[RMDB]
RNA sequence: GGGAACGACUCGAGUAGAGUCGAAAAGAUAUGGACUUCUACGAAGGCGAUGAAAUCGGAAACGAUGGAGCCUGAGUAGAGAGUCCUAAGUCAAACAUUGAUCCGCUGUUCGCAGCGGAUCAAUGAAUCGAAUAAUUUAGUUCGCUAAAUUAUUCGAAAAAGAAACAACAACAACAAC
Reactivity to 2A3 in 0.01 (KOAc 150mM, MgCl2 10mM, bicine 150mM(pH8.5), 24C), signal-to-noise 2, nucleotides 027 to 126: g020a010u060a060u130g010g010a000c000u020u000c000u000a010c000g010a000a000g000g040c010g180a270u060g030a020a040a000u010c010g010g040a060a060a010c010g000a010u020g010g030a000g000c000c000u000g000a000g010u010a000g010a010g020a000g000u000c010c000u000a080a000g020u020c040a080a060a090c010a010u000u010g000a000u000c000c010g010c040u030g080u100u090c300g000c200a000g000c000g000g000a000u000c000a010a000u000g010a000a030
Reactivity to DMS in 0.01 (KOAc 150mM, MgCl2 10mM, bicine 150mM(pH8.5), 24C), signal-to-noise 5, nucleotides 027 to 126: g000a060u000a300u000g000g000a010c000u000u000c000u000a010c000g000a300a030g010g020c000g010a080u010g000a100a120a020u010c000g000g000a150a130a170c000g000a010u000g000g000a120g020c010c000u000g010a300g010u000a000g000a040g010a030g020u000c010c000u010a010a090g000u000c030a110a130a230c010a010u000u000g000a010u000c000c000g000c000u000g020u000u000c250g010c010a010g010c000g000g000a000u000c000a010a000u000g010a100a090